[RMDB]
RNA sequence: GGGAACGACUCGAGUAGAGUCGAAAAGAAUGUGAUGCCACAUACCAAUGCCGCUCGAGUGCUGUAACGCAUAUGGUAAACAAACAUGGCUUUGUGCGAGCUGAUGCCCUCCGGAGGAUCAAAUACGGUGCGAUUAGUAGUUCGCUACUAAUCGCACAAAAGAAACAACAACAACAAC
Reactivity to DMS in 0.01 (KOAc 150mM, MgCl2 10mM, bicine 150mM(pH8.5), 24C), signal-to-noise 2, nucleotides 027 to 126: g030a180a000u000g030u000g000a050u020g020c130c030a030c070a060u000a160c080c000a040a040u000g000c020c080g020c040u000c010g000a110g070u030g000c050u010g000u000a040a090c070g000c020a020u020a080u020g020g020u010a000a080a070c120a090a060a070c090a060u010g000g030c000u000u000u000g010u000g010c070g000a030g010c050u010g030a020u000g000c060c000c000u020c000c000g000g000a060g000g020a010u000c190a050a130a070u010a070c170g010
Reactivity to 2A3 in 0.01 (KOAc 150mM, MgCl2 10mM, bicine 150mM(pH8.5), 24C), signal-to-noise 3, nucleotides 027 to 126: g100a020a060u120g030u050g070a160u190g050c040c010a040c010a070u080a030c010c020a040a120u060g040c000c000g020c030u020c020g070a020g030u140g020c060u050g020u110a080a020c040g000c030a000u070a090u080g050g000u050a020a170a020c100a030a110a010c020a070u140g020g000c000u000u000u060g040u040g020c020g020a030g020c010u010g000a050u120g030c010c030c000u040c040c040g020g000a050g010g030a010u090c060a010a040a000u180a050c070g000